[RMDB]
RNA sequence: GGGAACGACUCGAGUAGAGUCGAAAAGUUAAGGUGAUCUGUCCUGUGGCAUAUUUUUCAUCGCUUUUCCAGGAAAUAAGCAGAAGAAACCGAGAGAAAGGACUGAGAUGAAGAGCUCUAUUAAUCUUGCCCAUCCUCUGUCCAGUAACUGAGUCCAUAAGAAGUCCAGUUUCGACUGGACUUCUUAAAAAGAAACAACAACAACAAC
Reactivity to 2A3 in 0.01 (KOAc 150mM, MgCl2 10mM, bicine 150mM(pH8.5), 24C), signal-to-noise 2, nucleotides 027 to 156: g020u030u050a040a080g000g010u010g020a080u030c010u010g030u020c000c000u010g020u030g060g050c010a030u060a150u110u100u130u170u210c090a120u180c130g010c010u080u120u140u030c050c020a020g040g060a020a060a180u190a070a070g000c000a040g010a040a000g040a090a090a020c000c000g030a050g010a030g010a070a100a040g000g000a000c050u050g010a000g000a060u030g040a070a050g080a050g040c020u040c010u100a170u120u150a120a140u080c050u090u080g030c000c000c010a030u050c030c080u000c030u050g010u000c000c000a010g010u040a000a020c020u040g040a010g040u050c000c120a020
Reactivity to DMS in 0.01 (KOAc 150mM, MgCl2 10mM, bicine 150mM(pH8.5), 24C), signal-to-noise 1, nucleotides 027 to 156: g000u010u000a070a090g050g030u000g010a080u010c050u020g010u010c010c030u000g040u020g020g000c050a110u020a040u010u000u000u000u000c020a130u000c040g000c010u000u020u020u000c030c070a230g020g010a020a030a030u000a010a030g000c020a160g020a100a150g010a070a090a070c040c030g010a100g020a080g020a090a100a120g000g010a060c000u000g030a070g010a090u000g020a120a100g010a150g010c060u000c060u010a150u020u000a100a070u000c040u000u010g010c040c020c000a120u010c050c030u010c030u000g020u000c000c000a130g000u000a030a180c040u000g000a230g000u000c020c050a160
Source: RMDB library OK3TST, as collected in RNAgym. Chemical mapping of a 207-nucleotide RNA with 2A3 and DMS. DMS adducts were read by reverse transcription with MarathonRT. Conditions: 150 mM KOAc, 10 mM MgCl2 and 150 mM bicine (pH 8.5), 24 C. Values cover nucleotides 27 to 156.